[RMDB]
RNA sequence: GGGAACGACUCGAGUAGAGUCGAAAAGAUAUGGAUGUACCGUGGGUUCGCAGAGAUAUGGUAUCGCGCUAUCGGAAACGAUAGCGAACUACGAUACCAUGUGUAGAACCCGUACAUCCUAAGUCAAAAGAAUGACUCGCUUCGGCGAGUCAUUCAAUCAUAAACUCCAGUUCGCUGGAGUUUAUGAAAAAGAAACAACAACAACAAC
Reactivity to 2A3 in 0.01 (KOAc 150mM, MgCl2 10mM, bicine 150mM(pH8.5), 24C), signal-to-noise 3, nucleotides 027 to 156: g000a010u010a010u030g000g010a010u010g010u020a010c130c240g270u210g020g000g000u020u010c030g110c300a010g000a000g010a010u030a000u050g010g000u000a000u000c020g000c000g000c010u000a000u000c000g010g000a010a000a000c000g000a000u000a000g000c020g000a000a000c040u190a070c010g000a000u000a000c000c000a000u000g000u000g000u010a060g000a000a000c000c000c000g000u000a000c000a000u010c000c000u000a010a000g000u000c000a010a020a010a140g010a000a000u000g000a010c000u000c000g010c010u040u090c170g070g000c010g000a000g010u000c000a000u000u000c000a000a000
Reactivity to DMS in 0.01 (KOAc 150mM, MgCl2 10mM, bicine 150mM(pH8.5), 24C), signal-to-noise 2, nucleotides 027 to 156: g020a030u000a040u000g000g000a010u000g030u000a000c010c070g050u010g050g030g040u000u000c010g050c170a210g010a070g010a040u000a010u010g020g030u000a000u010c000g000c000g020c010u000a000u000c000g020g000a060a030a120c010g010a030u000a020g030c000g000a000a040c050u020a300c000g000a030u010a010c000c000a000u000g000u000g040u000a040g010a020a020c010c020c010g020u000a000c000a030u000c010c000u000a000a050g010u020c010a080a070a110a130g010a040a010u000g010a030c000u000c020g010c020u000u000c300g060g020c000g000a000g020u000c000a000u010u000c010a070a180
Structure probing data (2A3 and DMS) for a 207-nucleotide construct. For 2A3 the reverse transcriptase was SuperScript II with manganese. Source: RMDB library RNAMAK, as collected in RNAgym.